The record gives the reactivity of an RNA of 177 nucleotides to DMS and 2A3.
For DMS, 1,044 sequencing reads were counted.
It was measured as part of the RMDB library OK2TST.
For 2A3 the reverse transcriptase was SuperScript II with manganese.
DMS adducts were read by reverse transcription with MarathonRT.
The RNA was probed in 150 mM KOAc, 10 mM MgCl2 and 150 mM bicine (pH 8.5) at 24 C.

RNA sequence: GGGAACGACUCGAGUAGAGUCGAAAAGAUUACAGGCGUGAGCCACCACACUCUGCCUCUGUGGUAUGGGGCAGUUCAGAUGAUAUCAUGGGUGGACCUGUGAUGUAGGCAAGGUAUGAAAAAAGAGGGAUGAAUCCUUGUUCGCAAGGAUUCAUCCAAAAGAAACAACAACAACAAC
Reactivity to DMS in 0.01 (KOAc 150mM, MgCl2 10mM, bicine 150mM(pH8.5), 24C), signal-to-noise 2, nucleotides 027 to 126: g030a080u000u000a040c040a040g000g030c300g050u000g020a120g000c010c000a050c050c000a070c060a110c100u010c000u000g030c030c000u000c000u000g020u010g010g010u020a090u000g000g000g000g010c000a020g020u010u000c100a070g020a080u000g030a110u010a300u000c060a010u010g000g000g000u000g000g000a180c050c000u000g000u000g000a030u000g020u000a070g000g000c060a050a090g000g000u020a090u010g000a010a040a120a050a080a070g000a200g010
Reactivity to 2A3 in 0.01 (KOAc 150mM, MgCl2 10mM, bicine 150mM(pH8.5), 24C), signal-to-noise 1, nucleotides 027 to 126: g060a010u050u060a100c030a010g030g000c080g160u260g080a030g090c010c000a010c000c000a080c000a050c010u010c000u000g020c000c000u000c030u020g210u160g220g050u280a170u080g050g000g000g130c010a010g000u070u050c030a020g060a100u060g080a050u020a050u250c100a040u050g060g060g020u020g040g050a030c010c000u060g010u030g030a020u070g050u080a020g000g000c030a010a040g000g000u240a100u130g140a040a030a000a000a010a020g140a050g000